The data come from the RNA Mapping Database (RMDB), library OK3TST.
Chemical mapping of a 207-nucleotide RNA with DMS and 2A3.
The reactions ran in a buffer of 150 mM KOAc, 10 mM MgCl2 and 150 mM bicine (pH 8.5), at 24 C.
Reactivities are given for positions 27 through 156.
The 2A3 profile rests on 1,831 reads.
For DMS the reverse transcriptase was MarathonRT.
[RMDB]
RNA sequence: GGGAACGACUCGAGUAGAGUCGAAAAUGAUCGAUGGCUGGUACAGCCAGGAAAACUACUGGGACCGCGACCUUGAGAUCGGUAGCGCGACAGUACGCUUCCCGCUGAAGAAAGGCGGCUACUGGGAACGCCUGAUCGAUCGCCCGAGCCGCUUCGGCAUUUGACGCUUCUUCGGAAGCGUCAAAUGAAAAGAAACAACAACAACAAC
Reactivity to DMS in 0.01 (KOAc 150mM, MgCl2 10mM, bicine 150mM(pH8.5), 24C), signal-to-noise 1, nucleotides 027 to 156: u000g010a110u000c030g000a100u020g000g030c020u010g020g020u000a120c100a040g090c010c010a160g020g010a020a050a070a090c050u000a020c000u010g000g000g000a220c100c030g010c000g010a070c030c030u000u000g000a180g020a140u010c130g000g000u000a050g010c030g030c020g010a210c040a040g000u000a010c050g020c070u000u000c030c000c000g050c060u000g000a080a160g010a070a080a160g050g000c000g000g040c050u000a100c080u000g010g010g020a100a180c070g010c010c020u010g040a100u000c040g020a020u000c010g050c000c000c020g000a140g010c020c020g020c000u000u000c070g010g000
Reactivity to 2A3 in 0.01 (KOAc 150mM, MgCl2 10mM, bicine 150mM(pH8.5), 24C), signal-to-noise 3, nucleotides 027 to 156: u070g000a000u010c020g000a010u030g020g000c020u030g060g220u300a200c100a020g000c000c010a020g000g020a040a090a010a040c040u040a000c000u010g000g030g130a050c010c030g010c000g020a010c010c020u090u130g170a070g020a170u220c060g000g010u020a030g050c010g010c030g060a040c030a000g000u030a070c080g000c080u020u010c000c010c030g000c090u100g030a090a120g060a110a230a050g060g010c010g000g000c010u080a110c140u260g050g020g010a060a060c080g050c030c010u040g020a050u010c000g000a010u010c020g030c000c000c000g000a000g000c000c000g030c080u040u010c030g030g000
Record summary:
DMS (dimethyl sulfate) methylates the pairing face of unpaired adenines and cytosines.